Conditions: 150 mM KOAc, 10 mM MgCl2 and 150 mM bicine (pH 8.5), 24 C.
An RNA of 207 nucleotides, treated with 2A3 and read out base by base.
2A3 adducts were read by reverse transcription with SuperScript II with manganese.
Values cover nucleotides 27 to 156.
It was measured as part of the RMDB library M2RFPK.
RNA sequence: GGGAACGACUCGAGUAGAGUCGAAAACGUGGUCAUCGACAACACCCUAUGCAUUCAUGCUCUGUAAGGAUGCGCCGAAAGGUGAGCAAGCCCGAGUUGCCCAGACCUGAAAUGCAACACUUUAGAGAAAACCCGAAGCAGUUCGCUGCUUCGGGAAGGUCAUAGAACGGUUCGCCGUUCUAUGACCAAAAGAAACAACAACAACAAC
Reactivity to 2A3 in 0.01 (KOAc 150mM, MgCl2 10mM, bicine 150mM(pH8.5), 24C), signal-to-noise 1, nucleotides 027 to 156: c030g030u060g050g030u100c070a050u060c220g100a070c000a070a020c010a100c000c000c000u030a050u130g050c000a010u000u050c000a000u140g010c010u010c010u030g070u010a000a000g000g000a020u020g000c000g020c030c000g080a130a080a000g030g000u020g060a010g020c050a080a060g070c000c020c000g100a070g010u080u090g060c080c000c000a020g010a100c000c000u080g050a100a040a070u100g000c010a000a130c030a030c080u160u280u130a080g020a020g030a040a120a020a020c000c000c000g000a000a000g000c000a000g010u010u100c120g090c170u000g010c000u000u000c010g000g010g000a000a000